This 207-nucleotide RNA was probed chemically with DMS and 2A3. For 2A3 the reverse transcriptase was SuperScript II with manganese. For DMS the reverse transcriptase was MarathonRT. The 2A3 profile rests on 3,713 reads. Conditions: 150 mM KOAc, 10 mM MgCl2 and 150 mM bicine (pH 8.5), 24 C. The DMS profile rests on 4,843 reads.
[RMDB]
RNA sequence: GGGAACGACUCGAGUAGAGUCGAAAAUUAAGCAUCUCUAAACUUCGCUUUUCUCAUUUGUAAAAUGAGGGUAGUAAUAGUACCUACCUCAUGGGAUUAUUACGAGAAUUAAAACAUCAUUAAAGUGCUUGGCACAUAGCAAGCACCCUACAAAUGAAUUACCAUAAAUCUUCGGAUUUAUGGUAAUAAAAGAAACAACAACAACAAC
Reactivity to DMS in 0.01 (KOAc 150mM, MgCl2 10mM, bicine 150mM(pH8.5), 24C), signal-to-noise 3, nucleotides 027 to 156: u000u010a080a140g000c040a100u010c020u000c040u000a060a130a100c100u000u000c070g010c020u000u000u000u000c020u000c010a060u010u010u000g010u010a040a210a080a040u000g010a030g030g000g030u000a110g000u000a020a050u000a030g000u000a060c030c000u010a190c130c140u010c120a150u000g010g010g000a050u010u000a010u000u000a020c030g010a190g010a140a210u000u000a050a060a070a070c020a070u000c010a040u000u000a160a120a100g000u000g010c000u010u010g030g020c110a090c180a170u000a100g000c000a000a020g010c000a010c000c020c040u000a070c020a030a020a010u000g000a110
Reactivity to 2A3 in 0.01 (KOAc 150mM, MgCl2 10mM, bicine 150mM(pH8.5), 24C), signal-to-noise 3, nucleotides 027 to 156: u130u100a060a000g030c020a100u040c030u000c050u170a090a100a130c060u190u170c100g040c060u090u060u100u040c030u000c010a010u040u040u060g050u080a060a090a060a050u020g000a020g040g060g020u040a030g000u000a010a030u010a040g040u070a200c000c000u010a040c020c050u090c070a070u090g010g000g000a010u020u030a020u030u040a060c030g020a020g080a070a080u140u180a080a090a030a050c020a040u080c010a010u030u140a120a090a040g010u010g000c000u020u030g140g010c110a050c060a220u080a060g070c010a010a000g000c000a000c030c000c000u030a030c020a020a030a020u090g020a010

Source: RMDB library OK3TST, as collected in RNAgym.